Description
An RNA of 177 nucleotides, treated with DMS and read out base by base. DMS adducts were read by reverse transcription with MarathonRT.
[RMDB]
RNA sequence: GGGAACGACUCGAGUAGAGUCGAAAAGAUGUGCACCCGGGCGACGGCGGCUACGCCAUCGGGUACGGCUGCAGCAAGUGGGCGGUGGAGGUGCUUCUCAAGGAGCUGCACCAGCGCUGGGGUGUUCAGCACCCCUCCAUUUCGAUGGAGGGGUGCUAAAAGAAACAACAACAACAAC
Reactivity to DMS in 0.01 (KOAc 150mM, MgCl2 10mM, bicine 150mM(pH8.5), 24C), signal-to-noise 1, nucleotides 027 to 126: g000a090u030g010u000g000c050a040c080c000c000g000g020g000c020g000a070c090g010g040c040g000g030c160u000a110c110g030c020c010a050u000c060g010g010g060u010a050c130g020g000c180u000g000c000a070g050c070a100a060g040u000g010g000g000c050g010g000u000g000g000a080g000g000u000g010c050u020u000c040u000c050a090a110g000g010a200g040c040u000g000c010a070c020c010a160g000c100g020c020u010g010g020g020g020u000g000u000u000c040

Conditions: 150 mM KOAc, 10 mM MgCl2 and 150 mM bicine (pH 8.5), 24 C.